[RMDB]
RNA sequence: GGGAACGACUCGAGUAGAGUCGAAAAGGAUUGAAAGUAAGUUGAUAAUGACCAAGUCAAGGUCCAGGCUGGCAACAGAGCAGACAGAGCGAGGCACAUCGAUGGGUAGCGAGGAAAGUCGACUUAAACCACUAAUUAAGUUCGCUUAAUUAGUGGUAAAAGAAACAACAACAACAAC
Reactivity to DMS in 0.01 (KOAc 150mM, MgCl2 10mM, bicine 150mM(pH8.5), 24C), signal-to-noise 9, nucleotides 027 to 126: g000g010a090u010u000g010a080a080a100g010u000a050a080g010u000u000g010a080u010a090a110u010g010a090c040c040a090a120g010u000c100a080a080g010g010u000c020c070a080g000g000c040u010g000g000c090a040a070c080a060g000a080g010c050a060g010a070c100a060g000a070g010c080g000a080g010g010c060a050c100a050u010c070g010a060u000g010g000g010u000a040g020c080g010a070g000g000a050a060a100g000u000c060g010a080c070u000u000a050a130
Reactivity to 2A3 in 0.01 (KOAc 150mM, MgCl2 10mM, bicine 150mM(pH8.5), 24C), signal-to-noise 5, nucleotides 027 to 126: g030g020a090u080u140g030a050a020a020g060u120a060a040g030u030u030g070a090u070a180a100u110g040a040c020c000a060a000g080u060c040a060a050g070g000u000c010c020a030g010g010c010u040g010g010c000a030a030c020a050g040a010g040c010a010g030a030c010a010g040a010g030c030g020a040g000g010c030a000c010a080u050c030g050a040u050g000g000g060u020a020g040c020g020a010g000g040a060a050a020g040u040c020g010a030c000u040u050a100a090

Structure probing data (DMS and 2A3) for a 177-nucleotide construct. It was measured as part of the RMDB library RFMREP. The RNA was probed in 150 mM KOAc, 10 mM MgCl2 and 150 mM bicine (pH 8.5) at 24 C.